[RMDB]
RNA sequence: GGGAACGACUCGAGUAGAGUCGAAAAUAGGUUACGUCUACGUAAAAACGUUACAGUUAAAUAUAACUGCAAAUAACAAAAAUUCUUACGCAUUAGCUGCUUAAUUUAGCGCAUGCGUUGCUCUUGACCAGUUUACUCGUGACUGGUUUUCGAGUAUACCUCAAAGAUAGUUCGCUAUCUUUGAGGUAAAAGAAACAACAACAACAAC
Reactivity to DMS in 0.01 (KOAc 150mM, MgCl2 10mM, bicine 150mM(pH8.5), 24C), signal-to-noise 2, nucleotides 027 to 156: u000a030g030g000u000u000a050c070g000u030c020u010a050c020g020u010a050a030a010a070a070c100g030u000u000a030c020a040g020u000u000a050a120a150u020a190u000a010a010c000u000g030c040a010a070a100u000a160a300c070a000a020a040a090a090u000u000c000u000u000a040c040g000c020a080u000u010a090g030c000u010g010c010u000u000a060a210u000u000u000a020g000c030g000c010a050u000g000c000g010u000u000g000c000u010c030u000u000g000a030c020c010a000g000u000u010u000a070c210u000c190g000u000g010a020c020u020g040g020u000u010u000u000c010g020a070g010u000a070u000
Reactivity to 2A3 in 0.01 (KOAc 150mM, MgCl2 10mM, bicine 150mM(pH8.5), 24C), signal-to-noise 5, nucleotides 027 to 156: u080a010g020g020u040u020a010c010g020u000c060u030a030c060g100u100a020a030a040a020a010c010g000u010u040a020c000a010g000u020u040a070a250a160u290a190u060a120a040c010u020g020c040a040a100a180u160a120a070c080a050a080a030a030a060u060u010c000u030u020a000c000g000c010a020u040u120a100g020c080u130g020c000u150u130a150a150u300u270u250a050g000c000g010c000a000u000g000c000g000u000u020g000c000u000c000u010u020g000a000c000c010a010g000u000u010u050a080c070u060c060g050u070g020a000c000u000g000g000u000u010u050u010c010g000a000g010u000a010u010